This 177-nucleotide RNA was probed chemically with DMS. For DMS the reverse transcriptase was MarathonRT. Conditions: 150 mM KOAc, 10 mM MgCl2 and 150 mM bicine (pH 8.5), 24 C. Source: RMDB library 15KREP, as collected in RNAgym.

[RMDB]
RNA sequence: GGGAACGACUCGAGUAGAGUCGAAAAGGCAAGUGGUAUGAUUUUGGUGACUUCGUAAUCACUCAACCUGGUUCAGGAGUAGCUAUAGUUGAUAGCUACUAUUCUUAUUUGAUGCCUGUGCUCUCAACUACAGUCACUACUUCGGUAGUGACUGUAGAAAAGAAACAACAACAACAAC
Reactivity to DMS in 0.01 (KOAc 150mM, MgCl2 10mM, bicine 150mM(pH8.5), 24C), signal-to-noise 2, nucleotides 027 to 126: g000g020c030a020a120g010u000g000g010u010a000u000g000a040u000u010u000u010g020g020u000g000a050c070u010u000c300g020u010a120a160u000c020a000c020u000c080a010a020c030c010u000g000g030u000u000c040a020g000g010a020g000u000a000g020c000u010a010u000a160g020u030u010g010a180u000a010g000c010u000a010c000u000a030u000u000c030u000u000a030u000u000u010g010a280u000g000c020c010u010g010u000g010c110u000c040u000c040a090a230